RNA sequence: GGGAACGACUCGAGUAGAGUCGAAAAACGGUGCGGAAGUUCGCGCUUCCGUGAAACGCGAAAAUCGGACGGUGGCUGCAAGUCGCAUCGCAAAACCGCGGCAAGUGGAGUUAGCGAGAGGAGGCUGAACAGUACUCUUGUUCGCAAGAGUACUGUUAAAAGAAACAACAACAACAAC
Reactivity to DMS in 0.01 (KOAc 150mM, MgCl2 10mM, bicine 150mM(pH8.5), 24C), signal-to-noise 5, nucleotides 027 to 126: a090c050g000g010u010g010c010g000g000a040a040g020u000u000c230g010c170g000c010u000u000c020c060g020u000g000a030a070a060c060g010c040g020a050a050a100a090u020c100g000g000a040c070g020g040u010g010g010c020u010g010c060a060a060g010u010c020g020c040a090u010c030g030c060a050a050a060a050c080c040g010c030g010g000c100a070a090g020u020g000g000a120g010u010u010a120g020c030g000a060g000a060g010g000a120g000g010c030u010g000
Reactivity to 2A3 in 0.01 (KOAc 150mM, MgCl2 10mM, bicine 150mM(pH8.5), 24C), signal-to-noise 5, nucleotides 027 to 126: a000c020g030g020u100g000c000g020g040a030a020g030u070u160c080g020c040g000c080u010u010c000c000g000u020g030a100a080a010c060g020c020g070a030a020a000a120u100c040g030g000a010c030g020g000u010g050g000c020u030g000c080a060a030g030u030c020g000c050a040u010c010g020c030a080a050a000a010c030c010g030c010g050g050c130a130a060g010u030g010g030a070g020u090u100a040g050c020g020a030g010a020g060g030a020g030g000c030u030g030